[RMDB]
RNA sequence: GGGAACGACUCGAGUAGAGUCGAAAAGGGGAGACCCCGAUCAGAAUGCCGAUCGGGUGCAAGCACCUCUGGAGUCAUCCGGCCCCAAAGGAGGAGAGUCCCGCCAGGGGUGAUCCACCCGGAGAUGAAGCUCUACCCUUCGGGGUAGAGAAAAGAAACAACAACAACAAC
Reactivity to 2A3 in 0.01 (KOAc 150mM, MgCl2 10mM, bicine 150mM(pH8.5), 24C), signal-to-noise 8, nucleotides 027 to 129: g010g010g010g010a080g040a040c020c000c010c000g000a010u050c000a020g170a300a070u160g080c060c050g040a050u070c010g000g050g000u020g000c010a090a250g020c010a010c010c010u000c000u010g010g020a040g050u020c010a090u040c050c030g170g030c050c000c000c000a070a130a020g040g010a030g030g000a060g020a010g070u050c030c030c010g040c030c020a000g000g000g000g000u000g000a010u020c000c000a020c050c000c000g030g010a060g000a020u180g050a050a010g020
Reactivity to DMS in 0.01 (KOAc 150mM, MgCl2 10mM, bicine 150mM(pH8.5), 24C), signal-to-noise 7, nucleotides 027 to 129: g030g000g010g020a170g000a150c030c000c000c000g010a050u040c050a110g000a160a090u040g020c100c060g030a080u050c010g040g000g000u030g060c080a110a160g040c050a040c000c000u030c020u030g050g000a130g000u040c120a080u000c000c000g020g020c000c010c010c130a050a060a230g040g000a270g000g000a020g020a120g000u010c040c010c050g010c050c050a090g030g010g010g020u000g010a050u030c160c040a100c030c000c020g030g000a090g020a120u040g020a120a060g020
This 170-nucleotide RNA was probed chemically with 2A3 and DMS. Reactivities are given for positions 27 through 129. The RNA was probed in 150 mM KOAc, 10 mM MgCl2 and 150 mM bicine (pH 8.5) at 24 C. DMS adducts were read by reverse transcription with MarathonRT.